[RMDB]
RNA sequence: GGGAACGACUCGAGUAGAGUCGAAAAUUUCGCCUUUGCCCCUUCAUCAUUAUACAAAAUGUCUACCAUUACCACACCCACACAUUGAUAUUAUGACUAAUUGUUUAUUAGCUAAGUUCCCAUGGCCGUAUUGUUCAAUCUUCGGAUUGAACAAUACAAAAGAAACAACAACAACAAC
Reactivity to DMS in 0.01 (KOAc 150mM, MgCl2 10mM, bicine 150mM(pH8.5), 24C), signal-to-noise 3, nucleotides 027 to 126: u000u010u000c050g020c030c030u000u000u000g010c040c010c010c030u000u010c080a060u000c050a040u010u010a080u010a110c110a060a040a060a040u000g020u000c030u000a080c060c030a050u000u010a070c040c060a050c080a070c020c010c010a080c110a060c080a070u000u000g010a080u000a060u000u000a060u010g000a120c050u010a030a040u000u000g020u000u010u000a060u000u000a060g020c010u010a040a120g010u000u000c000c010c010a140u010g010g000c110c160
Reactivity to 2A3 in 0.01 (KOAc 150mM, MgCl2 10mM, bicine 150mM(pH8.5), 24C), signal-to-noise 2, nucleotides 027 to 126: u030u030u040c030g040c000c000u110u090u140g000c000c000c000c000u100u000c000a060u040c000a030u020u090a100u040a130c050a010a070a020a020u050g040u000c020u020a050c040c010a030u000u080a010c020c000a030c020a020c060c010c020a030c000a010c000a060u040u070g060a010u050a040u180u100a090u100g060a060c000u030a120a000u010u050g070u120u180u080a090u020u020a010g020c020u030a070a010g020u000u000c050c000c000a000u020g040g040c030c050
Conditions: 150 mM KOAc, 10 mM MgCl2 and 150 mM bicine (pH 8.5), 24 C.
Chemical mapping of a 177-nucleotide RNA with DMS and 2A3.
DMS adducts were read by reverse transcription with MarathonRT.
For 2A3 the reverse transcriptase was SuperScript II with manganese.
High DMS reactivity at an A or C suggests that its Watson-Crick edge is free.
For DMS, 2,863 sequencing reads were counted.
For 2A3, 1,735 sequencing reads were counted.